An RNA of 207 nucleotides, treated with DMS and 2A3 and read out base by base. For 2A3, 2,087 sequencing reads were counted. The reactions ran in a buffer of 150 mM KOAc, 10 mM MgCl2 and 150 mM bicine (pH 8.5), at 24 C. For DMS the reverse transcriptase was MarathonRT. For DMS, 2,406 sequencing reads were counted.

RNA sequence: GGGAACGACUCGAGUAGAGUCGAAAAGUAUGCGCAAUUGCAGUUCACUUAUGACACUUUGAGAAACUACAUUAACCGUGCUCUGAGACAGAUCGCUGAAGCCUGGUGUAAAGACCAAAAAAGAACACUCGAAGUCCUGAAAGAACUCAGUAAAAUACAUUACGUGGAGGUUCGCCUCCACGUAAUGAAAAGAAACAACAACAACAAC
Reactivity to DMS in 0.01 (KOAc 150mM, MgCl2 10mM, bicine 150mM(pH8.5), 24C), signal-to-noise 2, nucleotides 027 to 156: g010u010a020u000g010c050g030c070a080a090u000u010g020c020a140g010u010u000c020a090c050u000u000a100u000g010a140c100a050c090u000u010u020g010a090g000a200a050a120c080u000a040c010a080u010u000a180a120c030c030g010u010g010c050u000c010u010g010a220g010a180c000a090g000a070u010c050g000c050u000g010a080a110g000c010c010u000g030g060u000g020u000a010a070a070g030a150c080c100a000a060a110a070a090a090g010a040a040c060a120c020u010c050g000a110a100g000u010c010c020u000g030a080a070a210g010a080a070c020u000c040a000g000u000a050a080a080a120u010a160
Reactivity to 2A3 in 0.01 (KOAc 150mM, MgCl2 10mM, bicine 150mM(pH8.5), 24C), signal-to-noise 3, nucleotides 027 to 156: g030u010a020u090g060c050g000c040a050a100u090u100g000c010a010g020u030u060c040a030c110u050u100a040u160g050a020c000a020c080u050u070u140g060a050g030a080a110a020c060u120a020c040a120u110u060a080a020c020c010g040u040g010c000u000c010u050g050a030g030a040c020a040g030a090u100c040g010c050u020g020a030a010g050c000c010u000g010g030u010g010u040a100a090a020g010a050c030c000a100a000a020a030a000a000g080a070a030c030a000c070u030c020g030a030a010g020u010c010c010u010g020a060a090a050g030a060a030c060u040c080a010g050u150a020a060a020a110u240a030